RNA sequence: GGGAACGACUCGAGUAGAGUCGAAAAGUGCGACAUUUCGAUGUCGCACAAACCCAAAUGGUGGCACCUAACUAAACAAGCGGGGAAAAGCCAGAUGCCAACGUCCUUAGCCCUUCGGGGCUAAGAACCCAGAUAACGUUUUCGAACGUUAUCUGGGAAAAGAAACAACAACAACAAC
Reactivity to DMS in 0.01 (KOAc 150mM, MgCl2 10mM, bicine 150mM(pH8.5), 24C), signal-to-noise 2, nucleotides 027 to 126: g000u000g000c000g000a010c010a010u010u000u010c150g000a000u000g000u000c000g000c000a000c000a010a040a110c000c010c000a100a060a090u000g010g010u010g020g040c030a030c030c010u000a040a100c020u000a080a070a090c160a080a090g010c060g020g000g000g000a080a070a120a030g010c040c030a080g000a010u000g030c000c010a050a050c090g000u000c120c000u000u000a010g000c000c000c000u000u000c170g040g000g000g000c000u000a000a010g010a080a110
Reactivity to 2A3 in 0.01 (KOAc 150mM, MgCl2 10mM, bicine 150mM(pH8.5), 24C), signal-to-noise 2, nucleotides 027 to 126: g000u000g000c000g010a000c010a010u050u010u150c230g140a000u020g000u040c000g020c010a000c000a000a000a000c020c000c020a050a020a020u150g030g000u040g000g010c030a080c060c010u060a100a110c020u100a210a050a180c100a120a060g020c110g020g020g000g010a020a180a000a000g010c030c010a010g060a080u160g050c010c030a070a040c070g070u040c000c010u000u000a010g000c000c000c020u020u090c260g020g000g000g010c010u000a000a000g000a000a000
Record summary:
Structure probing data (DMS and 2A3) for a 177-nucleotide construct. Reactivities are given for positions 27 through 126. The data come from the RNA Mapping Database (RMDB), library M2PK50. As a SHAPE reagent, 2A3 marks flexible, mostly unpaired nucleotides at the ribose 2'-OH.